[RMDB]
RNA sequence: GGGAACGACUCGAGUAGAGUCGAAAAAGUUAGGUUCGCUAUGGUGCAACUCUUUAAGGCAAUAACGAACUAAUUCUAAGCAUGUAAUGGAGAAAUGCCAGGGUCACUAUCUAGCCAUAAUAGUGCUGUAAGUGACUUAGAUUCGUCUAAGUCACAACCAAAUGAACUUGUUCGCAAGUUCAUUUGGAAAAGAAACAACAACAACAAC
Reactivity to 2A3 in 0.01 (KOAc 150mM, MgCl2 10mM, bicine 150mM(pH8.5), 24C), signal-to-noise 9, nucleotides 027 to 156: a000g100u090u060a060g010g070u030u010c010g010c030u030a010u060g100g060u080g050c050a110a140c070u090c080u150u240u190a100a060g050g000c030a040a030u050a100a050c030g030a010a010c020u050a040a000u090u030c020u080a070a030g020c020a030u080g040u180a130a050u090g080g020a050g050a100a090a020u060g020c020c020a050g030g000g010u040c000a000c020u020a030u080c030u040a030g010c000c010a020u040a100a040u040a090g060u040g030c040u040g040u100a180a090g000u010g000a000c000u000u000a000g000a000u020u040c150g030u000c140u000a000a000g000u000c000a000c000a000a010
Reactivity to DMS in 0.01 (KOAc 150mM, MgCl2 10mM, bicine 150mM(pH8.5), 24C), signal-to-noise 4, nucleotides 027 to 156: a070g020u010u000a070g010g010u000u000c010g030c020u000a040u000g020g040u000g030c030a120a130c110u000c140u010u010u010a070a100g010g020c040a080a040u000a020a040c010g000a020a050c010u000a020a090u000u000c070u000a100a090g030c050a060u000g000u010a090a090u000g020g020a130g000a090a080a070u010g010c030c040a110g000g020g020u000c010a040c050u000a040u010c040u000a100g030c050c050a090u000a050a090u000a070g030u000g000c040u010g020u010a060a120g000u000g000a030c010u000u000a010g000a060u000u000c300g010u010c000u000a000a010g010u000c010a010c000a060a140